[RMDB]
RNA sequence: GGGAACGACUCGAGUAGAGUCGAAAACGGAAAUCACCACGCUUUCAGGCAGGCCGAGACGCUGCGCCCAUUCCGGGCAUAAGGUGCCCACCGGAAUAUCGGCAGUCCAAGUGUCAGUGAACAGCGGACCCUCUGUAAGGUUCGCCUUACAGAGGGUAAAAGAAACAACAACAACAAC
Reactivity to DMS in 0.01 (KOAc 150mM, MgCl2 10mM, bicine 150mM(pH8.5), 24C), signal-to-noise 3, nucleotides 027 to 126: c070g010g000a100a090a140u010c040a090c020c090a070c020g000c040u000u000u020c180a090g010g010c040a120g020g020c020c030g000a070g000a090c160g010c040u000g010c090g010c030c010c060a140u000u010c040c020g040g010g000c070a080u000a080a080g030g010u010g020c040c030c050a180c080c030g000g000a030a030u000a100u000c080g010g020c020a090g000u000c040c070a050a090g020u010g010u000c060a100g010u010g010a050a070c150a070g000c070g000g000
Reactivity to 2A3 in 0.01 (KOAc 150mM, MgCl2 10mM, bicine 150mM(pH8.5), 24C), signal-to-noise 2, nucleotides 027 to 126: c050g060g040a050a080a090u100c020a020c090c000a040c040g000c020u020u090u110c050a040g030g060c020a010g100g000c010c030g040a040g010a040c050g020c100u090g010c040g020c010c040c010a030u080u080c010c010g020g010g000c010a030u070a130a080g200g020u040g010c020c020c000a030c030c060g040g020a030a000u080a030u120c010g040g000c020a020g010u030c040c010a090a030g030u020g030u080c040a040g040u020g060a070a060c030a050g010c020g020g040